Structure probing data (2A3) for a 207-nucleotide construct. For 2A3, 1,144 sequencing reads were counted. For 2A3 the reverse transcriptase was SuperScript II with manganese.
RNA sequence: GGGAACGACUCGAGUAGAGUCGAAAACGGCAUUUCCCCAGCAGCCAUGACCUACCAGGCUGCGGUGCGGCUCGCCGCACAGGUCAUCCCUCAUCGGGCGCGUCCUGCAUCCUUCCACGCCAACCCAAGACCAUUGCUUCCUUCGGGAAGCAAUGAAGCAGGACUUAAUGUUCGCAUUAAGUCCUGCAAAAGAAACAACAACAACAAC
Reactivity to 2A3 in 0.01 (KOAc 150mM, MgCl2 10mM, bicine 150mM(pH8.5), 24C), signal-to-noise 1, nucleotides 027 to 156: c050g070g030c040a080u000u040u100c000c000c000c000a040g000c000a000g000c000c010a230u130g010a050c000c000u130a180c050c110a020g010g020c020u030g000c020g000g000u040g000c000g030g000c050u080c150g120c020c000g070c010a030c010a000g020g040u050c020a110u140c010c000c000u050c010a100u110c060g020g020g020c040g030c050g030u050c000c030u050g010c010a020u010c010c010u070u050c020c000a080c070g040c010c000a040a040c030c000c000a020a000g060a050c050c000a010u000u030g010c010u000u000c000c000u000u000c010g060g020g020a000a000g020c000a000a000u000g000a000a000